[RMDB]
This 177-nucleotide RNA was probed chemically with DMS and 2A3. The data come from the RNA Mapping Database (RMDB), library OK2TST. Reactivities are given for positions 27 through 126. For DMS, 2,454 sequencing reads were counted.

RNA sequence: GGGAACGACUCGAGUAGAGUCGAAAAUCACCUUUUCUGAGAAGAGUGAAGCAAAUCCACGUUGCUGGUCUGAAAGCGUGAAUAUUUAAAUACAAACAUAUGCAGACAGGGGACAAUCUGUCUCUUGUAUCAUGGAGGAUUUCGAUCCUCCAUGAUAAAAAGAAACAACAACAACAAC
Reactivity to DMS in 0.01 (KOAc 150mM, MgCl2 10mM, bicine 150mM(pH8.5), 24C), signal-to-noise 3, nucleotides 027 to 126: u000c050a070c030c010u000u010u010u000c140u020g010a120g020a080a040g020a120g030u000g000a060a110g000c090a040a070a080u000c050c050a050c070g000u010u000g030c030u000g000g000u000c040u010g010a050a080a080g010c070g020u000g000a060a040u000a070u010u010u010a040a070a080u020a090c090a060a090a070c100a060u000a070u010g010c080a050g000a070c020a040g000g000g000g020a040c110a120a090u010c190u020g010u000c000u000c010u000u010g000
Reactivity to 2A3 in 0.01 (KOAc 150mM, MgCl2 10mM, bicine 150mM(pH8.5), 24C), signal-to-noise 1, nucleotides 027 to 126: u030c010a090c000c000u020u090u050u030c150u190g120a120g040a180a040g110a030g050u110g080a070a020g000c050a000a060a060u040c040c000a020c050g060u050u100g020c070u110g000g160u000c040u050g050a120a000a030g040c000g000u000g030a110a060u130a110u130u220u150a080a070a040u190a030c070a010a110a010c000a030u160a070u230g050c020a010g000a050c010a000g000g020g020g050a000c050a080a170u040c060u090g000u000c000u000c000u040u040g000